[RMDB]
RNA sequence: GGGAACGACUCGAGUAGAGUCGAAAAAACGAGUUGUCGGCGCCUCUGGUCGACCGGUUGUCUGAUAAGGCAGUGCCGGGCAGCUACGCGCUAGGUGAUAAAGGCUGAAAGCAUCUAAGCCUGAGGUCAUAUCCUCUCUCUUCGGAGAGAGGAUAUGAAAAGAAACAACAACAACAAC
Reactivity to DMS in 0.01 (KOAc 150mM, MgCl2 10mM, bicine 150mM(pH8.5), 24C), signal-to-noise 2, nucleotides 027 to 126: a130a050c060g020a070g030u000u000g020u000c020g000g000c020g010c010c000u000c020u000g020g000u000c020g020a090c010c010g000g000u000u010g010u010c000u000g020a130u010a120a050g010g000c020a030g000u020g000c000c010g020g010g030c050a070g000c010u000a010c090g000c020g000c000u000a040g010g020u000g020a070u000a110a100a030g000g030c000u010g000a110a160a150g020c130a050u000c040u010a160a160g000c010c020u000g010a110g010g000u000

Chemical mapping of a 177-nucleotide RNA with DMS. For DMS, 1,764 sequencing reads were counted. For DMS the reverse transcriptase was MarathonRT. Reactivities are given for positions 27 through 126. The data come from the RNA Mapping Database (RMDB), library RFMREP.